[RMDB]
The record gives the reactivity of an RNA of 177 nucleotides to DMS and 2A3.
The RNA was probed in 150 mM KOAc, 10 mM MgCl2 and 150 mM bicine (pH 8.5) at 24 C.
In probing experiments dimethyl sulfate is read out at A N1 and C N3, which are open when not base-paired.
For 2A3 the reverse transcriptase was SuperScript II with manganese.
RNA sequence: GGGAACGACUCGAGUAGAGUCGAAAAACUAGUAUGUACAGGGGUGAGUUGACCUGUCAUCUAGACUGCUGACCAUCAACUCACCGGUCAGCUAGAUGAUGUCCACAGAGUACGACAUCAGUACUCAGUGUAAGGUAGCGUUCGCGUUACUUUACACAAAAGAAACAACAACAACAAC
Reactivity to DMS in 0.01 (KOAc 150mM, MgCl2 10mM, bicine 150mM(pH8.5), 24C), signal-to-noise 9, nucleotides 027 to 126: a150c010u000a010g010u030a030u000g010u060a010c010a030g010g010g010g020u010g010a040g010u000u000g000a050c080c090u010g010u000c000a010u000c020u000a050g010a120c130u010g010c040u000g000a010c010c300a210u010c050a030a030c040u010c030a040c100c110g000g000u000c000a010g000c000u020a010g000a090u010g010a080u020g010u000c010c030a110c210a110g000a030g000u000a020c030g010a130c180a090u030c120a080g010u000a010c010u000c010a160
Reactivity to 2A3 in 0.01 (KOAc 150mM, MgCl2 10mM, bicine 150mM(pH8.5), 24C), signal-to-noise 9, nucleotides 027 to 126: a000c010u010a010g040u090a130u210g080u100a010c020a030g160g030g030g050u080g040a070g020u030u040g060a050c020c050u030g010u000c000a010u000c000u020a050g120a210c090u070g010c010u010g010a000c010c020a030u060c020a030a050c030u020c050a030c010c020g000g000u000c000a000g000c000u010a000g000a050u100g020a020u070g060u040c010c000a060c050a080g020a010g020u030a010c050g080a030c100a170u110c030a050g010u010a010c010u010c040a010

Record summary: Reactivities are given for positions 27 through 126.